Source: RMDB library M2PK50, as collected in RNAgym. The record gives the reactivity of an RNA of 177 nucleotides to 2A3 and DMS. For 2A3, 1,794 sequencing reads were counted.
[RMDB]
RNA sequence: GGGAACGACUCGAGUAGAGUCGAAAAUAGACCUGAUUCGUCAGGUCUACCAGCGAGGGAGAGAGCGAGGGUCCCACGCUCCCAGGGUCGCUCGCUCCCAAAGACUUCCUGAAUUCGUUCAGGAAAAAUAGAUGACUGGAUUCGUCCAGUCAUCUAUAAAAGAAACAACAACAACAAC
Reactivity to 2A3 in 0.01 (KOAc 150mM, MgCl2 10mM, bicine 150mM(pH8.5), 24C), signal-to-noise 1, nucleotides 027 to 126: u060a000g000a000c010c000u010g010a020u040u080c130g080u010c090a020g000g000u000c000u000a000c020c010a060g080c050g130a150g000g050g000a060g000a000g010a000g050c010g010a030g100g130g040u050c020c010c010a030c050g090c030u020c000c000c010a000g020g000g000u010c020g000c140u010c000g050c010u020c000c000c020a040a080a010g090a070c060u000u020c010c000u020g000a020a030u120u070c200g060u050u000c010a010g000g000a090a000a000a000
Reactivity to DMS in 0.01 (KOAc 150mM, MgCl2 10mM, bicine 150mM(pH8.5), 24C), signal-to-noise 2, nucleotides 027 to 126: u000a000g000a000c000c000u010g000a010u000u000c230g030u000c000a020g010g020u000c000u000a010c060c050a080g020c150g020a270g000g000g030a090g010a050g010a040g010c010g010a100g010g020g000u000c010c010c010a090c090g000c080u010c000c000c010a200g010g000g010u000c000g010c000u000c010g000c010u000c000c010c020a080a090a050g010a160c170u000u000c000c000u010g000a020a030u000u010c180g000u000u000c000a000g010g000a000a020a040a110